Structure probing data (2A3 and DMS) for a 177-nucleotide construct.
2A3 adducts were read by reverse transcription with SuperScript II with manganese.
Values cover nucleotides 27 to 126.
It was measured as part of the RMDB library OK1LIB.
[RMDB]
RNA sequence: GGGAACGACUCGAGUAGAGUCGAAAACAAUCUGGAACGGAGUCAACCAACGAUGAUGACCCAAGCCGUACUAUUGAUGCAGGUGGCAGCGCAAGAGGGACUCAAUCAUCAACAACCACUACAACAGCUAUUCACCUAGAUUCGUCUAGGUGAAUAGAAAAGAAACAACAACAACAAC
Reactivity to 2A3 in 0.01 (KOAc 150mM, MgCl2 10mM, bicine 150mM(pH8.5), 24C), signal-to-noise 9, nucleotides 027 to 126: c040a010a090u090c060u110g050g030a050a050c060g040g020a030g050u040c030a030a070c050c010a050a040c090g050a060u100g020a030u060g030a040c000c010c010a030a020g040c020c010g080u090a090c050u070a100u150u170g120a110u130g040c040a040g010g060u030g040g030c030a050g010c050g000c070a060a030g040a090g090g040g030a040c040u010c060a020a090u030c010a010u020c010a000a060c020a040a080c060c030a060c060u160a050c050a140a010c020a040g030
Reactivity to DMS in 0.01 (KOAc 150mM, MgCl2 10mM, bicine 150mM(pH8.5), 24C), signal-to-noise 6, nucleotides 027 to 126: c100a090a070u010c060u000g000g020a080a060c100g010g000a060g020u010c040a060a120c040c040a100a100c210g010a070u010g030a110u010g000a090c020c040c040a050a110g000c050c050g000u010a090c090u010a090u030u030g010a070u010g010c050a050g010g000u010g000g010c040a050g000c060g020c070a060a070g000a100g000g010g010a040c050u010c050a070a030u030c050a040u000c050a080a070c170a070a100c060c050a050c110u010a050c120a060a090c150a110g000